[RMDB]
RNA sequence: GGGAACGACUCGAGUAGAGUCGAAAAUAUAGCGUGAAGUGCACAGCAUUGGGAAGUCUGUGUCUGCAAGCCCAUCACCUUCACUAGGAUACAACAUUUUCAUCUUUGGACCUCUAGGCUAACCGGAGAUUGAAACUUACUUGGCCUCUACCUAAACAACUAAGAGUCAUUUCGAUGACUCUUAGUUAAAAGAAACAACAACAACAAC
Reactivity to 2A3 in 0.01 (KOAc 150mM, MgCl2 10mM, bicine 150mM(pH8.5), 24C), signal-to-noise 7, nucleotides 027 to 156: u210a020u060a020g040c020g030u030g040a050a020g030u060g070c020a010c010a020g020c040a050u140u190g120g040g020a050a040g050u010c020u010g030u010g020u030c050u050g010c040a050a040g020c010c000c010a020u070c020a020c010c010u030u040c020a040c080u040a060g010g050a060u080a150c040a070a020c030a140u030u060u060u080c030a040u010c020u030u030u050g040g000a080c020c030u090c160u170a110g020g000c040u050a060a030c020c000g010g000a020g010a030u070u160g020a040a020a010c020u050u070a030c010u040u050g040g000c010c010u000c020u080a080c000c060u130a270a060a050c050
Reactivity to DMS in 0.01 (KOAc 150mM, MgCl2 10mM, bicine 150mM(pH8.5), 24C), signal-to-noise 2, nucleotides 027 to 156: u000a060u000a140g020c080g060u000g010a050a060g000u010g030c020a080c000a080g020c080a180u010u010g030g020g000a160a130g000u020c050u000g030u000g020u000c000u010g030c040a050a120g030c030c010c060a170u010c040a060c030c010u000u000c030a080c060u000a030g020g000a110u000a060c060a060a070c050a100u010u000u010u000c030a080u010c020u010u000u010g030g000a100c010c030u010c090u010a110g040g010c060u000a070a160c020c040g070g020a060g000a080u000u010g010a070a040a090c100u000u000a080c040u010u000g020g040c000c000u000c040u000a110c050c020u020a070a040a100c120
Overview:
The data come from the RNA Mapping Database (RMDB), library OK3TST. This 207-nucleotide RNA was probed chemically with 2A3 and DMS. 2A3 adducts were read by reverse transcription with SuperScript II with manganese. The 2A3 profile rests on 6,379 reads. The RNA was probed in 150 mM KOAc, 10 mM MgCl2 and 150 mM bicine (pH 8.5) at 24 C.